[RMDB]
RNA sequence: GGGAACGACUCGAGUAGAGUCGAAAAGAUAUGGACUCCCACAGGGAGCUGGUCGGAAACGACUCAGCGUUGAUCUGUGAGGAGUCCUAAGUCAAAAGCAUAAAUAUUGUUCGCAAUAUUUAUGCAAGAUACGAGAAUCCUUCGGGAUUCUCGUAUCAAAAGAAACAACAACAACAAC
Reactivity to 2A3 in 0.01 (KOAc 150mM, MgCl2 10mM, bicine 150mM(pH8.5), 24C), signal-to-noise 1, nucleotides 027 to 126: g000a000u090a050u200g000g000a010c000u000c010c000c000a000c000a000g110g030g000a000g040c000u000g000g000u000c000g000g010a080a140a050c030g020a000c130u210c300a010g020c030g040u080u020g000a030u000c000u020g030u020g080a300g000g050a000g020u010c000c000u000a000a010g000u000c000a000a000a070a120g010c000a000u000a000a010a000u020a000u030u030g000u040u090c200g000c110a000a010u010a020u000u000u000a010u020g000c000a000a010
Reactivity to DMS in 0.01 (KOAc 150mM, MgCl2 10mM, bicine 150mM(pH8.5), 24C), signal-to-noise 1, nucleotides 027 to 126: g000a060u000a300u000g010g000a010c000u000c000c010c000a030c010a000g050g000g010a030g020c000u000g030g020u000c000g010g000a120a140a150c010g000a000c000u020c010a030g020c000g000u000u030g000a010u010c000u000g000u000g010a090g020g000a040g000u010c000c000u000a000a040g000u000c070a130a060a170a180g000c000a000u000a010a010a020u000a000u000u000g010u010u000c240g000c000a020a000u000a010u000u000u000a000u010g010c000a030a030
The record gives the reactivity of an RNA of 177 nucleotides to 2A3 and DMS. Reactivities are given for positions 27 through 126. The reactions ran in a buffer of 150 mM KOAc, 10 mM MgCl2 and 150 mM bicine (pH 8.5), at 24 C. The 2A3 profile rests on 1,796 reads. DMS adducts were read by reverse transcription with MarathonRT. It was measured as part of the RMDB library TTRDEL. In probing experiments dimethyl sulfate is read out at A N1 and C N3, which are open when not base-paired.